The record gives the reactivity of an RNA of 177 nucleotides to 2A3 and DMS. 2A3 adducts were read by reverse transcription with SuperScript II with manganese. High DMS reactivity at an A or C suggests that its Watson-Crick edge is free. The RNA was probed in 150 mM KOAc, 10 mM MgCl2 and 150 mM bicine (pH 8.5) at 24 C.

RNA sequence: GGGAACGACUCGAGUAGAGUCGAAAACCAGCCAUUGUUCGGCGGGAAUUUUGUCUUUCAGCGUCGGGAAGCCGGUCAUAUUACCAAUCGGGAAGAUAUCGUGCGGCACCAGCACGGUGGCUGGCGCCGGAGUGUUGAGAUUCGUCUCAACACUCCGAAAAGAAACAACAACAACAAC
Reactivity to 2A3 in 0.01 (KOAc 150mM, MgCl2 10mM, bicine 150mM(pH8.5), 24C), signal-to-noise 5, nucleotides 027 to 126: c010c000a000g020c010c000a060u060u090g040u100u110c040g010g010c030g000g020g040a030a020u110u110u140u260g100u050c070u010u080u040c040a070g090c000g030u030c010g020g030g040a090a010g020c020c020g020g040u060c030a030u040a080u130u130a070c030c050a110a250u200c110g050g010g030a050a080g030a080u060a020u080c070g000u060g080c010g020g040c060a070c050c000a020g020c040a000c030g030g000u010g030g000c010u010g010g000c020g030c010
Reactivity to DMS in 0.01 (KOAc 150mM, MgCl2 10mM, bicine 150mM(pH8.5), 24C), signal-to-noise 6, nucleotides 027 to 126: c010c000a110g000c040c020a060u000u000g000u010u000c060g020g010c030g010g000g000a060a050u000u000u000u000g000u000c090u000u000u000c040a090g010c020g010u000c040g010g010g000a130a150g010c020c010g010g000u000c070a070u000a060u000u000a140c040c030a100a110u010c150g010g010g010a090a120g000a060u000a030u010c080g020u010g000c040g000g010c070a110c060c040a110g010c070a050c050g010g020u000g010g010c010u000g000g000c060g020c080